[RMDB]
RNA sequence: GGGAACGACUCGAGUAGAGUCGAAAAACUCAAAAGUUGUGCAAUGUAGGAAAUUGCAGUGUAUUUCCAGAAAGGUAAUGAAGCAUUACUCAGUGUUUCAAAAUUCUCAGCUUCCUUGGCUUUGAGUGCAUAACAGUGAUUCAACAUGGAUAACAUACGUUGUUUAUACCUUCGGGUAUAAACAACGAAAAGAAACAACAACAACAAC
Reactivity to DMS in 0.01 (KOAc 150mM, MgCl2 10mM, bicine 150mM(pH8.5), 24C), signal-to-noise 2, nucleotides 027 to 156: a150c040u000c030a070a090a150a140g010u000u000g000u000g020c010a080a070u000g040u000a160g020g010a040a070a070u010u000g040c010a270g050u010g040u000a020u000u000u010c010c060a110g020a060a070a070g010g000u000a070a200u000g000a020a060g030c000a070u000u010a080c120u000c160a040g000u000g040u020u020u000c020a050a040a090a120u000u000c040u000c050a140g000c030u000u000c050c060u010u000g010g020c070u030u000u020g000a070g050u000g000c030a070u000a050a010c080a050g020u010g000a120u000u000c060a050a130c040a030u000g000g010a130u010a040a100c070a130u000a120
Reactivity to 2A3 in 0.01 (KOAc 150mM, MgCl2 10mM, bicine 150mM(pH8.5), 24C), signal-to-noise 2, nucleotides 027 to 156: a000c050u070c040a050a070a000a120g010u030u020g020u020g010c020a030a020u040g030u220a080g060g110a060a060a020u020u050g050c050a070g010u020g000u070a100u020u030u020c020c000a020g130a090a060a010g080g020u080a040a050u060g020a040a000g010c010a000u020u080a100c080u060c090a010g010u000g020u000u000u000c000a050a050a050a100u170u040c050u010c040a010g050c020u150u040c000c000u040u050g020g000c000u050u070u110g040a040g040u040g000c000a010u080a090a040c040a020g060u040g100a080u080u080c030a040a090c000a110u120g050g000a070u160a190a000c000a060u180a030